[RMDB]
The record gives the reactivity of an RNA of 177 nucleotides to DMS and 2A3. Conditions: 150 mM KOAc, 10 mM MgCl2 and 150 mM bicine (pH 8.5), 24 C. The DMS profile rests on 25,387 reads.
RNA sequence: GGGAACGACUCGAGUAGAGUCGAAAAUUUACAUCAAUAGCACAAUAUCGUGAUGUUGAAUCGAUUAAUGCCUACCAUCAGUUGCUAAGUGAAGGGCAUGCUGAAGCGGAUGUAUUAGCGAUUUUAGGAAAAGGAAAGAUUUCGAUCUUUCCUUUUCAAAAGAAACAACAACAACAAC
Reactivity to DMS in 0.01 (KOAc 150mM, MgCl2 10mM, bicine 150mM(pH8.5), 24C), signal-to-noise 8, nucleotides 027 to 126: u020u040u030a060c100a070u010c020a040a040u010a060g030c070a080c120a130a110u020a070u030c140g030u010g000a050u010g010u010u010g010a050a040u010c030g010a070u010u000a020a010u010g010c000c040u010a280c020c020a060u010c020a020g000u000u000g010c010u000a080a100g010u030g010a110a120g000g000g000c010a010u040g010c010u000g000a030a040g010c120g010g000a120u000g000u010a020u000u000a020g030c030g000a020u000u010u010u030a120g010
Reactivity to 2A3 in 0.01 (KOAc 150mM, MgCl2 10mM, bicine 150mM(pH8.5), 24C), signal-to-noise 9, nucleotides 027 to 126: u120u060u080a050c030a020u050c020a040a110u070a110g140c060a040c040a180a210u160a130u300c150g060u030g020a030u030g010u030u080g040a020a010u010c030g120a160u040u030a010a000u010g000c010c010u050a190c060c010a010u030c010a010g020u030u020g030c020u100a210a130g140u110g300a130a090g100g010g000c010a010u080g020c000u020g010a030a020g110c060g050g010a000u010g020u020a030u020u000a010g010c010g000a000u000u000u050u270a160g100
Overview:
It was measured as part of the RMDB library OK1LIB.